[RMDB]
RNA sequence: GGGAACGACUCGAGUAGAGUCGAAAAUCGUACAGAGCGAGGUCUGGCCCUCCGGGAUCAGUACCAACCGCAAGGAGCCAGUCUACGAGGGCAAGCCUGAUAUCCGGGUGAUUUCGUUUGCAUGGCCCGUUCUCUAUAGAUUCGUCUAUAGAGAACGAAAAGAAACAACAACAACAAC
Reactivity to DMS in 0.01 (KOAc 150mM, MgCl2 10mM, bicine 150mM(pH8.5), 24C), signal-to-noise 9, nucleotides 027 to 126: u000c040g010u010a100c110a120g000a140g020c010g010a110g010g010u000c010u000g000g010c020c010c010u010c210c140g010g010g010a030u000c040a040g010u010a060c050c040a110a170c120c030g010c140a090a130g000g010a140g000c030c020a070g000u000c040u000a040c110g010a050g000g000g010c080a090a160g010c030c040u000g010a110u010a070u010c140c030g000g000g010u000g010a080u000u000u000c030g000u000u000u000g010c060a080u010g010g000c020c060
Reactivity to 2A3 in 0.01 (KOAc 150mM, MgCl2 10mM, bicine 150mM(pH8.5), 24C), signal-to-noise 9, nucleotides 027 to 126: u060c010g010u040a040c030a080g090a020g090c020g020a030g020g020u010c010u030g030g000c020c010c000u040c070c080g070g000g010a100u060c030a010g020u100a050c010c030a050a070c050c010g030c060a050a050g050g000a030g010c010c010a010g010u000c020u020a030c020g020a030g010g030g020c060a040a010g030c000c010u020g020a050u040a100u260c090c020g020g010g020u060g040a070u030u080u040c030g020u030u090u060g080c110a120u030g030g020c000c010
Overview: This 177-nucleotide RNA was probed chemically with DMS and 2A3. For DMS the reverse transcriptase was MarathonRT. The reactions ran in a buffer of 150 mM KOAc, 10 mM MgCl2 and 150 mM bicine (pH 8.5), at 24 C. It was measured as part of the RMDB library OK2TST. For 2A3 the reverse transcriptase was SuperScript II with manganese. The 2A3 profile rests on 27,054 reads.